[RMDB]
RNA sequence: GGGAACGACUCGAGUAGAGUCGAAAACUUGAUACGUAUAGUACAGCACCUUGAAAACAAAUCAUCUGCUAGUUCAGUAUUUUCUACUUACAAUCACUCCCUCCCAGGGCAUGUAAUUAAUUUACUGCAUGUAAAUUUACUUCGGUAAAUUUACAUGAAAAGAAACAACAACAACAAC
Reactivity to 2A3 in 0.01 (KOAc 150mM, MgCl2 10mM, bicine 150mM(pH8.5), 24C), signal-to-noise 4, nucleotides 027 to 126: c010u020u090g030a040u070a100c020g020u100a090u120a230g030u020a040c000a050g010c010a080c020c030u050u110g060a040a080a030a000c060a020a090a050u050c020a030u020c020u040g010c000u050a020g040u080u060c030a010g020u030a080u050u060u010u010c000u020a070c000u060u050a040c060a060a110u040c020a030c080u020c010c010c000u010c020c000c010a000g050g000g030c040a030u120g010u040a050a020u100u060a030a060u060u030u060a040c030u030g020
Reactivity to DMS in 0.01 (KOAc 150mM, MgCl2 10mM, bicine 150mM(pH8.5), 24C), signal-to-noise 4, nucleotides 027 to 126: c070u000u000g010a080u010a050c090g010u010a080u010a080g020u010a040c060a060g010c040a030c050c030u000u000g010a060a080a080a100c110a060a090a070u000c060a040u010c030u000g000c040u000a080g010u000u000c060a070g010u010a030u000u000u000u010c070u000a040c060u000u010a040c100a050a070u010c080a100c080u000c010c010c020u000c010c010c020a210g000g000g010c110a020u010g000u000a010a020u010u010a060a060u010u000u000a010c030u000g010